[RMDB]
RNA sequence: GGGAACGACUCGAGUAGAGUCGAAAACUGACGGAUCACCAACAAUCUCUUAGACUGCUGGUCUUUUGUUGUAGUAGUAAUCGUCAUCAAAUCACGAGGCCAGUUUGCAUUCGUAGGCACAAUAGUCCCGAUGGUGCAUAUUCGUAUGCACCAUCGGAAAAGAAACAACAACAACAAC
Reactivity to DMS in 0.01 (KOAc 150mM, MgCl2 10mM, bicine 150mM(pH8.5), 24C), signal-to-noise 2, nucleotides 027 to 126: c160u000g000a050c060g020g000a050u000c080a070c080c040a030a060c040a060a040u010c070u000c120u010u010a070g010a060c050u010g000c060u000g000g030u020c030u000u050u000u000g010u000u000g020u010a050g000u010a110g000u010a070a100u000c110g000u000c040a090u000c100a050a040a090u000c060a020c080g000a060g000g000c010c080a050g000u000u000u000g010c090a040u000u000c040g010u000a080g000g000c050a050c130a080a130u000a100g020u000c050
Reactivity to 2A3 in 0.01 (KOAc 150mM, MgCl2 10mM, bicine 150mM(pH8.5), 24C), signal-to-noise 2, nucleotides 027 to 126: c050u030g030a040c020g020g000a040u060c030a010c150c000a030a030c000a030a100u030c030u000c010u090u080a080g030a080c020u060g060c010u020g040g010u000c030u010u050u060u110g060u000u040g050u100a190g020u000a010g050u010a090a080u090c060g100u020c030a040u040c020a090a040a040u200c050a040c140g000a040g060g000c020c030a020g040u130u140u070g040c010a050u120u020c010g080u070a050g010g070c030a000c030a090a150u110a060g070u060c000